The record gives the reactivity of an RNA of 177 nucleotides to DMS and 2A3. For DMS, 9,004 sequencing reads were counted. The RNA was probed in 150 mM KOAc, 10 mM MgCl2 and 150 mM bicine (pH 8.5) at 24 C. For 2A3 the reverse transcriptase was SuperScript II with manganese. 2A3 is a SHAPE reagent: it acylates the 2'-hydroxyl of flexible nucleotides of all four kinds.
RNA sequence: GGGAACGACUCGAGUAGAGUCGAAAAGAUAUGGAAAUGAAGCAGCAACAGCCUGUCACUCGGAAACGAGUGCAGGACAUGCUGCCAUUUCCUAAGUCAAAGGGUUUUCAGUUCGCUGAAAACCCAACUUACAACUCAAGUUCGCUUGAGUUGUAAGAAAAGAAACAACAACAACAAC
Reactivity to DMS in 0.01 (KOAc 150mM, MgCl2 10mM, bicine 150mM(pH8.5), 24C), signal-to-noise 5, nucleotides 027 to 126: g000a010u000a050u010g000g000a000a010a010u010g000a240a230g020c000a000g010c010a160a140c190a180g000c000c000u000g000u020c020a000c000u010c000g020g000a010a000a020c000g000a020g010u000g000c000a000g010g010a010c060a080u010g020c000u000g000c000c000a000u000u000u000c000c000u000a000a090g000u000c010a140a140a180g000g000g010u000u000u000u000c000a010g010u000u010c300g030c010u000g000a000a000a010a010c000c000c010a010a010
Reactivity to 2A3 in 0.01 (KOAc 150mM, MgCl2 10mM, bicine 150mM(pH8.5), 24C), signal-to-noise 4, nucleotides 027 to 126: g000a000u020a010u060g000g040a020a000a010u060g080a300a090g020c010a000g000c070a090a230c050a300g010c020c010u160g210u300c030a000c010u010c000g000g000a010a000a000c000g000a010g010u000g000c010a000g000g010a000c010a070u300g000c000u000g000c000c010a000u000u000u000c000c000u000a000a000g010u000c040a030a120a160g000g000g000u000u000u000u000c010a020g020u020u180c300g010c140u000g000a000a000a000a020c000c000c000a000a000
DMS (dimethyl sulfate) methylates the pairing face of unpaired adenines and cytosines.